[RMDB]
RNA sequence: GGGAACGACUCGAGUAGAGUCGAAAAGCUUGUAGCUUCGGCUACAAGCAUCUAAAAUCAGGGGUAAAUAAUUACGAGGCGUUACCGCUGAACGCCUCGAUACAACCACAUCAUUCGUGAUGUGGAAUCACUAAUUGAGAUUCGUCUCAAUUAGUGAAAAAGAAACAACAACAACAAC
Reactivity to DMS in 0.01 (KOAc 150mM, MgCl2 10mM, bicine 150mM(pH8.5), 24C), signal-to-noise 9, nucleotides 027 to 126: g000c000u000u000g010u000a010g010c000u000u020c220g030g010c000u000a000c000a000a010g010c000a010u000c030u000a050a050a080a080u010c090a060g010g000g010g010u010a080a100a080u000a080a100u010u010a150c020g000a010g000g010c010g010u000u000a050c050c200g000c080u010g000a020a010c010g010c000c000u000c000g000a040u000a040c280a100a180c010c000a010c000a000u000c000a050u000u010c190g010u000g010a010u000g010u000g000g000a040a040
Reactivity to 2A3 in 0.01 (KOAc 150mM, MgCl2 10mM, bicine 150mM(pH8.5), 24C), signal-to-noise 9, nucleotides 027 to 126: g000c000u000u010g000u000a000g000c010u030u040c280g110g000c000u000a000c000a000a000g000c000a000u010c010u060a100a100a040a090u120c050a040g040g030g030g040u070a050a080a100u140a090a180u230u160a090c010g000a000g000g000c000g000u000u030a090c030c050g030c110u070g020a000a000c000g000c000c000u000c000g000a000u010a010c020a030a060c000c000a000c000a000u000c000a010u020u130c200g100u040g010a000u000g000u000g000g010a000a020
The record gives the reactivity of an RNA of 177 nucleotides to DMS and 2A3. It was measured as part of the RMDB library M2PK50. Conditions: 150 mM KOAc, 10 mM MgCl2 and 150 mM bicine (pH 8.5), 24 C. For 2A3, 47,778 sequencing reads were counted.